[RMDB]
Structure probing data (2A3 and DMS) for a 177-nucleotide construct.
The data come from the RNA Mapping Database (RMDB), library OK2TST.
The RNA was probed in 150 mM KOAc, 10 mM MgCl2 and 150 mM bicine (pH 8.5) at 24 C.
For DMS, 2,734 sequencing reads were counted.
Values cover nucleotides 27 to 126.
RNA sequence: GGGAACGACUCGAGUAGAGUCGAAAAAAUGAAGGAGCCGAUUUUCUCUGAAGUUUGGUCCUCUUUCUUGACACUCGUCUCAAACGGCGAGUUCCGACCGAACAUUGCUUCAAUCAAUGCUGCUGAAUAUAAAUGACGGUUUCGACCGUCAUUUAUAAAAAGAAACAACAACAACAAC
Reactivity to 2A3 in 0.01 (KOAc 150mM, MgCl2 10mM, bicine 150mM(pH8.5), 24C), signal-to-noise 1, nucleotides 027 to 126: a010a010u120g020a000a000g070g010a040g060c020c000g040a020u220u040u030u000c080u040c100u120g020a030a010g020u010u040u060g010g020u120c000c030u000c010u030u070u000c020u030u060g050a010c020a020c030u030c010g000u000c050u030c080a240a130a030c050g060g000c000g000a000g010u000u000c010c010g020a090c040c020g030a080a050c020a040u070u030g030c010u190u130c020a030a100u060c010a030a030u080g070c050u080g010c020u040g110a190a010
Reactivity to DMS in 0.01 (KOAc 150mM, MgCl2 10mM, bicine 150mM(pH8.5), 24C), signal-to-noise 4, nucleotides 027 to 126: a050a040u000g000a040a060g000g000a060g010c060c030g010a030u000u010u000u000c050u010c190u030g010a050a030g000u000u000u000g040g000u000c080c060u010c020u000u000u010c030u000u000g000a170c300a060c010u010c010g000u000c000u000c120a090a080a140c230g000g000c000g000a010g010u010u000c030c070g000a070c070c080g000a050a090c030a070u000u000g000c130u000u000c230a090a090u000c060a040a050u000g010c060u000g020c070u000g000a130a160